RNA sequence: GGGAACGACUCGAGUAGAGUCGAAAAUUGCCGGUCAUUGGGGAGUAGCCGCUCUUCGUUUCGAAGGGGCUUACGUCAACAUACUUGACCGGCAGGUCAUGGCGUAAGCGGUUCUAAGCCUGGCAAGUUAGGUGAUGUCAUUCGUGACAUCACCUAAAAAAGAAACAACAACAACAAC
Reactivity to DMS in 0.01 (KOAc 150mM, MgCl2 10mM, bicine 150mM(pH8.5), 24C), signal-to-noise 3, nucleotides 027 to 126: u020u010g000c000c000g000g000u000c010a050u020u020g000g010g000g010a120g030u010a050g020c010c000g010c030u030c010u020u020c000g010u000u010u040c060g020a020a040g000g010g010g000c000u000u010a000c000g030u010c020a080a080c130a100u040a170c220u000u000g000a020c000c010g000g030c020a000g000g000u020c070a040u010g010g000c010g010u020a110a050g030c110g020g020u000u010c100u020a120a200g000c010c000u030g000g020c040a050a100g030
Reactivity to 2A3 in 0.01 (KOAc 150mM, MgCl2 10mM, bicine 150mM(pH8.5), 24C), signal-to-noise 5, nucleotides 027 to 126: u090u040g000c000c000g000g000u020c020a040u040u070g040g000g030g000a030g020u040a000g020c010c010g110c080u080c000u010u020c020g160u090u190u300c150g000a010a010g000g000g030g000c000u010u050a000c010g080u010c010a040a030c020a080u210a100c070u040u030g010a000c000c000g000g000c000a000g000g010u030c010a010u140g020g000c020g030u050a050a010g040c010g100g040u110u000c060u120a110a010g000c000c000u010g000g010c010a000a080g090
Structure probing data (DMS and 2A3) for a 177-nucleotide construct.
For DMS the reverse transcriptase was MarathonRT.
The RNA was probed in 150 mM KOAc, 10 mM MgCl2 and 150 mM bicine (pH 8.5) at 24 C.
For 2A3 the reverse transcriptase was SuperScript II with manganese.